[RMDB]
RNA sequence: GGGAACGACUCGAGUAGAGUCGAAAAUAGCUGCAACAUUAUUUGAGUAUCCUGAAAACGGGCUUUUCAGAAUGGUGUUGCCGUAUAAAAUUGUAGGAGUGCAUAGUGGCCCGUAUAGCAGGCAUUAACAUUCCUGAUAUGCUAUCCUUCGGGAUAGGGUUAUUGAUCUGUUCGCAGAUCAAUAACCAAAAGAAACAACAACAACAAC
Reactivity to DMS in 0.01 (KOAc 150mM, MgCl2 10mM, bicine 150mM(pH8.5), 24C), signal-to-noise 1, nucleotides 027 to 156: u000a080g040c060u000g020c010a050a050c040a040u000u000a040u010u010u000g010a230g050u000a060u000c010c000u010g000a070a040a080a130c040g050g060g030c200u000u000u000u000c000a100g030a050a080u010g020g010u000g010u000u010g000c000c060g040u000a130u000a100a050a090a120u070u010g020u010a050g010g010a070g050u010g020c040a170u000a120g050u010g030g050c030c000c010g020u010a100u000a220g080c130a010g020g010c060a060u000u000a110a040c000a090u010u010c020c010u020g010a140u000a080u000g010c000u010a020u010c000c020u000u010c300g080g040g000a050u010a020g000
Reactivity to 2A3 in 0.01 (KOAc 150mM, MgCl2 10mM, bicine 150mM(pH8.5), 24C), signal-to-noise 3, nucleotides 027 to 156: u090a010g020c010u000g010c000a010a000c000a010u010u010a030u050u050u000g020a030g040u080a100u080c010c000u030g080a050a010a040a090c090g000g030g010c000u090u040u070u070c060a050g020a100a010u010g010g000u010g000u000u000g000c010c000g010u060a040u100a050a110a040a090u080u190g070u230a020g000g030a010g020u020g040c060a070u060a090g080u030g090g130c060c000c010g040u110a170u070a130g070c060a010g010g010c000a000u020u020a040a000c000a000u000u010c000c000u000g060a040u050a030u210g040c000u000a000u000c000c000u010u040c200g080g000g000a000u000a010g000